Conditions: 150 mM KOAc, 10 mM MgCl2 and 150 mM bicine (pH 8.5), 24 C. Chemical mapping of a 207-nucleotide RNA with 2A3 and DMS. It was measured as part of the RMDB library OK3TST.
[RMDB]
RNA sequence: GGGAACGACUCGAGUAGAGUCGAAAACAAAGAAAUUCAGUGAUCAUCGGGGAUGCUCUGGUCCAAACACUACCUGCCAGCCAGACGCAGGAGAUGGAUGGCUCAGCAGUAAUCGUGCUGCUUGAGCUUGGUGUCUAAUGGGGACAGUAGUGACAGAUACCGUAAAUACCUUCGGGUAUUUACGGUAAAAAGAAACAACAACAACAAC
Reactivity to 2A3 in 0.01 (KOAc 150mM, MgCl2 10mM, bicine 150mM(pH8.5), 24C), signal-to-noise 3, nucleotides 027 to 156: c080a010a100a020g130a010a130a040u130u070c020a020g040u020g120a060u020c050a050u070c090g010g000g010g020a030u040g030c000u000c020u050g060g010u000c030c020a010a090a000c090a010c030u080a090c010c000u040g020c000c010a090g060c030c010a050g010a080c030g000c020a010g000g050a040g010a030u040g070g060a050u070g000g020c020u000c010a010g000c010a000g020u050a070a140u140c130g090u110g010c020u000g000c000u080u220g000a000g000c010u020u020g020g000u000g010u000c020u040a100a100u120g050g000g000g000a000c000a010g020u120a020g020u020g030a010c010a060g060a040
Reactivity to DMS in 0.01 (KOAc 150mM, MgCl2 10mM, bicine 150mM(pH8.5), 24C), signal-to-noise 2, nucleotides 027 to 156: c030a050a130a200g010a080a070a120u000u010c090a090g020u010g010a080u000c030a070u000c070g020g000g030g010a110u000g020c030u000c030u000g020g000u000c010c010a060a130a110c040a050c010u000a120c050c020u000g020c020c040a180g000c030c080a070g000a130c170g010c040a060g020g000a070g010a090u010g000g020a110u000g000g100c000u010c000a020g010c000a010g020u000a040a110u000c220g010u010g030c010u000g000c020u000u000g010a030g030c000u020u000g020g010u000g010u000c010u000a090a090u000g000g010g000g030a090c030a030g020u000a020g000u000g020a120c070a090g000a290